[RMDB]
RNA sequence: GGGAACGACUCGAGUAGAGUCGAAAACAAGUUGGUGAGGGGACGAACGUGUCGUCUUUGGUGACUGUUUAGAAGUCACGGUAGUGACAAGAAGAGUUCGUUAGUGGAGUAUGAACAGAAAAUGUCGAUAUGCGGAGGGAUUCGUCCCUCCGCAUAUAAAAGAAACAACAACAACAAC
Reactivity to DMS in 0.01 (KOAc 150mM, MgCl2 10mM, bicine 150mM(pH8.5), 24C), signal-to-noise 1, nucleotides 027 to 126: c170a120a110g010u020u000g020g020u000g000a050g040g020g000g030a020c010g010a010a050c090g000u050g000u010c010g030u010c000u020u000u000g020g030u000g000a040c010u010g000u070u090u040a050g020a070a080g010u030c000a030c050g000g000u000a010g020u000g000a020c010a030a090g000a100a060g000a150g000u000u000c030g020u000u000a100g020u010g000g000a050g010u000a040u010g000a030a040c060a090g000a040a030a080a120u030g010u030c110g020
Reactivity to 2A3 in 0.01 (KOAc 150mM, MgCl2 10mM, bicine 150mM(pH8.5), 24C), signal-to-noise 1, nucleotides 027 to 126: c250a160a060g140u070u160g060g250u260g000a060g000g000g040g000a000c080g000a000a000c000g000u080g000u180c080g040u000c000u070u190u230g300g000u000g120a000c000u000g100u000u150u000a290g000a250a000g090u000c000a000c000g000g000u080a170g000u000g000a000c000a060a170g140a040a100g040a020g100u000u000c000g000u040u030a080g040u000g000g040a040g000u300a300u080g000a120a000c060a000g250a080a000a040a040u290g000u040c000g000

The record gives the reactivity of an RNA of 177 nucleotides to DMS and 2A3. For DMS, 2,390 sequencing reads were counted. The 2A3 profile rests on 249 reads. 2A3 adducts were read by reverse transcription with SuperScript II with manganese.